[RMDB]
RNA sequence: GGGAACGACUCGAGUAGAGUCGAAAAGAUAUGGAGAUCGGGAUGGUUCUGAUGACCCACCCUGAAUCUCGAGGUCGGAAACGACCUUCGAGUGAGGUGGCAAGGAACCAUCCCGAUCUCCUAAGUCGUACUGUAAAUGGUUCGCCAUUUACAGUACAAAAGAAACAACAACAACAAC
Reactivity to DMS in 0.01 (KOAc 150mM, MgCl2 10mM, bicine 150mM(pH8.5), 24C), signal-to-noise 6, nucleotides 027 to 126: g010a100u010a300u010g010g000a000g010a020u000c000g030g000g010a020u000g010g000u010u000c000u000g010a130u010g010a090c300c000c000a010c010c000c070u000g010a130a070u000c000u000c000g000a010g000g020u010c000g010g000a100a090a200c000g000a010c000c000u000u020c010g010a010g000u000g000a200g000g020u000g000g000c020a070a110g000g000a020a000c000c000a000u000c000c000c000g000a000u000c000u000c000c000u000a000a080g010u010c120
Overview:
An RNA of 177 nucleotides, treated with DMS and read out base by base. The RNA was probed in 150 mM KOAc, 10 mM MgCl2 and 150 mM bicine (pH 8.5) at 24 C. It was measured as part of the RMDB library TTRINS. Values cover nucleotides 27 to 126.